[RMDB]
RNA sequence: GGGAACGACUCGAGUAGAGUCGAAAAGAUAUGGAGAUUAAGCUCGAUGAAAGUGUGGUAACUCCAAACUAUAUUCGGAAACGAAUAUAGUUUGGAUACCACACUGGAGAGCUUUAUCUCCUAAGUCCAUGAGUUGUACCUUCGGGUACAACUCAUGAAAAGAAACAACAACAACAAC
Reactivity to DMS in 0.01 (KOAc 150mM, MgCl2 10mM, bicine 150mM(pH8.5), 24C), signal-to-noise 2, nucleotides 027 to 126: g000a060u000a300u000g020g010a030g000a000u000u000a030a040g010c000u010c010g030a130u000g000a160a160a020g000u000g030u000g000g030u000a030a280c300u010c000c000a000a000a000c000u000a000u010a000u000u000c010g020g000a140a080a300c010g000a010a000u000a000u000a010g020u000u000u010g000g010a040u000a010c000c000a000c000a000c000u000g010g000a030g000a020g000c020u010u000u000a030u000c010u000c000c010u000a010a110g010u000c030